[RMDB]
RNA sequence: GGGAACGACUCGAGUAGAGUCGAAAAAUAUAUUGCCUUAUUAAAUCACCAAAUUAAUCCAUAAUCUCGAUGAUUUUUCCAGAUGCUACCGUACGGCUACCUUCACGAAUCGUAAAGCCUAGUCCCAAUACCCCUAUUGUUUCGACAAUAGGGGUAUAAAAGAAACAACAACAACAAC
Reactivity to 2A3 in 0.01 (KOAc 150mM, MgCl2 10mM, bicine 150mM(pH8.5), 24C), signal-to-noise 2, nucleotides 027 to 126: a000u130a000u020a070u060u160g080c000c000u120u100a170u050u140a130a140a050u100c040a000c040c030a000a040a280u060u080a010a030u120c040c010a050u020a160a080u080c030u030c070g090a070u070g030a060u130u060u040u080u070c060c000a040g060a160u040g020c010u040a040c050c010g060u070a040c050g040g000c000u020a040c000c000u030u020c060a020c020g070a030a080u050c000g020u050a030a060a040g010c010c000u020a000g060u010c020c000c000a020
Reactivity to DMS in 0.01 (KOAc 150mM, MgCl2 10mM, bicine 150mM(pH8.5), 24C), signal-to-noise 4, nucleotides 027 to 126: a080u010a110u000a080u000u000g010c030c010u000u010a070u010u000a060a070a080u000c030a040c040c020a080a080a080u010u000a060a090u000c100c040a090u010a060a040u000c050u000c080g030a070u010g010a060u000u000u000u000u010c020c030a080g010a060u000g010c050u010a030c060c030g020u000a080c080g020g000c020u000a060c050c030u000u000c050a060c060g010a050a040u010c070g010u000a060a070a090g000c030c040u000a090g010u000c000c000c010a070